[RMDB]
RNA sequence: GGGAACGACUCGAGUAGAGUCGAAAAAGCCAUACCAUUACGAUUGUAUGGCAAGUCCGUGACGGCGAUGGAUCCCGCCUGGCCGAUGCCGAACUGCCGAUCUGGCUGAUGGUUCCUGCCCCGUCAAAAAACGUAAAGCACUUCGGUGCUUUACGAACACUACAAUAACCUUCGGGUUAUUGUAGUGAAAAGAAACAACAACAACAAC
Reactivity to 2A3 in 0.01 (KOAc 150mM, MgCl2 10mM, bicine 150mM(pH8.5), 24C), signal-to-noise 5, nucleotides 027 to 156: a000g010c000c000a000u000a000c020c020a020u050u050a060c210g110a050u030u010g000u000a000u000g000g000c000a000a020g050u000c010c010g030u040g010a010c000g000g020c100g050a020u040g000g010a020u040c020c010c000g030c010c030u020g010g000c010c020g050a040u110g110c040c040g150a180a090c110u140g030c020c010g050a060u050c060u100g010g000c020u050g040a150u140g010g000u010u020c000c000u040g030c000c000c000c020g000u000c000a030a020a010a050a050a060c010g000u000a000a000a000g000c000a000c010u030u080c150g090g000u000g000c000u000u000u000a000c000g000a000a000
Reactivity to DMS in 0.01 (KOAc 150mM, MgCl2 10mM, bicine 150mM(pH8.5), 24C), signal-to-noise 2, nucleotides 027 to 156: a140g010c010c000a040u000a010c000c070a160u000u010a160c150g010a150u000u000g010u000a020u010g010g010c010a050a060g000u000c040c030g020u010g040a070c010g020g020c040g000a170u020g020g000a050u000c030c020c070g020c030c010u000g010g050c010c020g000a080u010g010c050c030g020a070a120c070u010g020c020c040g010a090u000c030u000g030g020c010u010g010a160u000g030g000u000u000c010c010u000g030c030c060c010c000g010u000c020a010a030a060a060a100a130c010g030u000a000a010a020g000c000a010c010u000u000c290g050g010u000g000c000u000u000u000a000c010g000a020a150